[RMDB]
RNA sequence: GGGAACGACUCGAGUAGAGUCGAAAAGACCGGUGGCCUGCCAGAAGCGAAAAAAGAAGACGAGCUGCCGUUCCACGUCGUGGCUUAUGAUUUUGGUGCCAAGCGCAACAUCCUGCGGAUGCUGGUGGCUUUAUCUAACAUUCGUGUUAGAUAAAGCAAAAGAAACAACAACAACAAC
Reactivity to 2A3 in 0.01 (KOAc 150mM, MgCl2 10mM, bicine 150mM(pH8.5), 24C), signal-to-noise 6, nucleotides 027 to 126: g040a040c030c000g000g040u030g030g020c010c020u030g030c030c010a040g030a100a020g070c070g150a100a070a010a020a020a020g130a050a010g060a030c050g020a010g010c020u010g030c020c000g020u050u030c030c010a040c030g070u070c030g010u040g020g000c010u070u080a090u140g120a110u040u080u100u160g040g000u020g000c010c010a050a030g030c030g010c040a010a040c000a070u050c010c020u070g030c040g040g010a020u080g010c030u030g020g070u030g060
Reactivity to DMS in 0.01 (KOAc 150mM, MgCl2 10mM, bicine 150mM(pH8.5), 24C), signal-to-noise 8, nucleotides 027 to 126: g000a120c080c010g020g010u000g000g000c030c030u000g020c030c020a060g010a130a100g020c070g010a000a050a070a100a070a090g010a160a090g010a080c050g010a080g020c040u000g020c040c010g000u000u000c030c040a100c070g000u010c060g020u000g010g000c050u000u010a070u010g000a150u000u000u010u000g010g010u000g000c030c030a070a080g010c050g010c040a050a050c060a060u000c030c020u000g010c100g010g000a070u000g010c020u000g000g010u010g010